[RMDB]
RNA sequence: GGGAACGACUCGAGUAGAGUCGAAAAACAGGCACGCUCUCAACUCGGCGACCACGUCGCGGUCUAUCUCGACGCGGGUCCAUCCGAACAGCAGGCCGGCUCCACGAUCGUCGAUCUGACCGGAGCCAAAAGCAUUCUUCUUCGGAAGAAUGCUUUUAAAAGAAACAACAACAACAAC
Reactivity to DMS in 0.01 (KOAc 150mM, MgCl2 10mM, bicine 150mM(pH8.5), 24C), signal-to-noise 4, nucleotides 027 to 126: a120c110a120g020g010c010a050c030g000c030u010c090u010c130a130a130c130u000c030g020g020c300g010a050c000c010a040c040g000u000c010g010c130g000g000u010c220u010a120u020c010u000c000g010a010c020g000c070g000g010g010u000c020c060a080u010c020c000g010a030a080c160a050g010c040a120g000g000c040c040g010g000c010u010c000c000a110c110g010a020u000c020g000u000c160g010a030u000c040u030g030a070c130c100g000g000a040g000c000c020
Reactivity to 2A3 in 0.01 (KOAc 150mM, MgCl2 10mM, bicine 150mM(pH8.5), 24C), signal-to-noise 1, nucleotides 027 to 126: a000c020a000g040g000c010a010c050g030c020u060c000u040c070a050a070c040u000c040g020g030c010g060a010c020c000a030c020g010u000c000g000c080g030g010u080c090u200a240u040c020u000c010g000a020c000g080c220g040g000g030u010c010c030a020u000c010c010g010a060a030c010a020g040c010a010g020g020c000c000g030g000c000u000c000c000a020c030g010a050u010c020g230u110c190g220a070u050c070u090g070a070c110c010g000g020a000g000c020c000
About this RNA: Conditions: 150 mM KOAc, 10 mM MgCl2 and 150 mM bicine (pH 8.5), 24 C. This 177-nucleotide RNA was probed chemically with DMS and 2A3. For 2A3 the reverse transcriptase was SuperScript II with manganese. The DMS profile rests on 3,217 reads. Values cover nucleotides 27 to 126.